RNA sequence: GGGAACGACUCGAGUAGAGUCGAAAACCUUGGAAGCGUCAGGAAGGGCCUUAGCGAGCCGCUGGAGCCAUUCCAUGGCGAAGACUGCCGAUGGUACUGUCUCGCGGAUUGCGUCCAGUAUGAGCGUUGCCAUGUAGCUUCCCAGGCGGUAUGAAGGACGGAUCACAGAAUUCGUUCUGUGAUCCGUAAAAGAAACAACAACAACAAC
Reactivity to 2A3 in 0.01 (KOAc 150mM, MgCl2 10mM, bicine 150mM(pH8.5), 24C), signal-to-noise 2, nucleotides 027 to 156: c000c000u000u020g030g000a060a000g020c000g080u080c110a030g000g070a050a030g070g020g030c000c000u030u030a050g020c040g100a090g000c060c060g000c110u040g000g020a040g000c000c000a030u090u000c050c060a060u030g030g000c010g010a030a000g040a010c040u070g000c000c030g190a150u190g030g000u010a030c070u050g050u070c020u000c030g000c040g000g040a070u060u220g060c060g070u020c000c000a070g000u110a110u150g020a050g010c040g030u080u120g000c020c000a020u100g050u040a010g000c000u000u020c000c000c000a020g020g050c040g090g060u200a230u240g150a100a000g130g020
Reactivity to DMS in 0.01 (KOAc 150mM, MgCl2 10mM, bicine 150mM(pH8.5), 24C), signal-to-noise 1, nucleotides 027 to 156: c000c000u010u020g010g000a000a050g040c000g010u000c040a160g020g020a060a050g000g000g060c030c070u000u000a060g020c040g040a170g070c190c090g030c000u000g000g000a120g000c020c010a090u020u010c020c020a060u000g050g020c020g050a070a070g010a120c040u010g010c040c030g000a180u000g020g000u000a020c040u010g000u010c000u000c010g040c000g060g090a170u020u000g030c050g000u010c010c000a090g040u010a020u000g000a060g020c020g030u000u000g010c010c000a090u010g000u000a160g040c020u000u000c010c010c060a190g020g030c010g010g020u010a070u020g000a140a170g000g050